The record gives the reactivity of an RNA of 177 nucleotides to DMS and 2A3. For 2A3, 14,788 sequencing reads were counted. Conditions: 150 mM KOAc, 10 mM MgCl2 and 150 mM bicine (pH 8.5), 24 C. For DMS, 9,087 sequencing reads were counted. For 2A3 the reverse transcriptase was SuperScript II with manganese. High 2A3 reactivity points to a flexible backbone, as in loops and unpaired stretches. Source: RMDB library TTRDES, as collected in RNAgym.
[RMDB]
RNA sequence: GGGAACGACUCGAGUAGAGUCGAAAAGAUAUGGACCACGGUGACAUGAAGUGAAGUCGGAAACGACUUCCUUCAACAGCACCAGUGGUCCUAAGUCAAACUGUGAAGCUCUUCGGAGCUUCACAGAUCUUACAACCAUGUUCGCAUGGUUGUAAGAAAAAGAAACAACAACAACAAC
Reactivity to DMS in 0.01 (KOAc 150mM, MgCl2 10mM, bicine 150mM(pH8.5), 24C), signal-to-noise 5, nucleotides 027 to 126: g000a020u010a200u010g000g000a020c000c000a000c000g010g000u010g010a040c150a190u010g010a010a000g000u020g010a010a000g020u000c010g010g010a060a040a110c010g010a020c000u000u000c000c010u000u000c000a080a070c290a170g000c020a010c000c000a130g070u000g000g000u000c000c000u000a000a070g000u010c010a130a120a230c000u000g010u000g010a020a000g000c000u000c000u000u020c230g010g010a000g000c000u000u010c000a010c000a000g000a030
Reactivity to 2A3 in 0.01 (KOAc 150mM, MgCl2 10mM, bicine 150mM(pH8.5), 24C), signal-to-noise 5, nucleotides 027 to 126: g020a000u020a000u070g000g000a000c000c000a000c010g000g030u020g040a150c140a300u300g010a020a010g090u130g300a000a010g010u010c000g000g000a020a030a010c000g010a010c000u000u010c000c000u010u000c000a020a020c110a020g020c000a000c010c110a000g000u010g010g000u000c000c000u010a010a000g010u010c030a070a070a090c010u000g000u000g000a010a010g000c000u000c020u080u210c300g170g010a000g000c000u000u010c000a000c000a000g010a000